[RMDB]
RNA sequence: GGGAACGACUCGAGUAGAGUCGAAAACAGAUAAUAACCUCCUGAAAAUGGCCAAAGCGGGUUAUAAAGUAAAUCCUACAGAACUAAUGUAUAUUCUAGGUACGUAUGGACAACAGAGGAUUGAUGGUGAACCAGCAGAGACUCGAGUAUUGGGUAGCUUUGCUAACCUGUUCGCAGGUUAGCAAAGAAAAGAAACAACAACAACAAC
Reactivity to 2A3 in 0.01 (KOAc 150mM, MgCl2 10mM, bicine 150mM(pH8.5), 24C), signal-to-noise 2, nucleotides 027 to 156: c010a010g060a020u110a120a010u040a010a120c000c010u020c010c000u050g020a050a090a030a100u130g050g000c030c020a050a030a050g080c110g040g030g000u150u030a050u060a070a040a000g040u020a030a050a070u020c010c020u040a030c010a040g100a130a040c060u090a130a090u160g060u050a130u030a030u200u050c040u040a020g060g020u030a020c010g000u070a090u130g050g020a040c010a100a000c020a080g080a030g060g000a050u060u070g020a020u010g000g070u010g020a000a020c020c020a010g000c010a000g010a000g000a060c050u030c080g020a030g050u060a110u120u090g060g010g010u010a010g000
Reactivity to DMS in 0.01 (KOAc 150mM, MgCl2 10mM, bicine 150mM(pH8.5), 24C), signal-to-noise 1, nucleotides 027 to 156: c040a150g010a140u000a070a100u080a120a050c010c020u000c070c000u000g000a050a110a170a140u010g020g000c070c020a000a110a210g010c070g000g010g020u060u020a010u010a050a060a240g020u000a040a060a040u000c010c010u000a120c090a040g000a090a170c040u000a070a090u010g000u010a090u010a100u000u000c050u000a120g010g000u010a060c100g000u000a120u010g010g000a070c040a060a080c070a070g000a110g010g000a070u000u000g030a090u000g010g020u010g000a030a090c090c010a050g040c010a140g010a270g020a060c000u000c020g000a090g030u000a120u000u000g000g020g040u010a150g000
Annotation: Chemical mapping of a 207-nucleotide RNA with 2A3 and DMS. Values are in units of 0.01, from 0 to 300, in steps of 10. The RNA was probed in 150 mM KOAc, 10 mM MgCl2 and 150 mM bicine (pH 8.5) at 24 C. For 2A3 the reverse transcriptase was SuperScript II with manganese. The DMS profile rests on 1,879 reads. The data come from the RNA Mapping Database (RMDB), library OK3TST.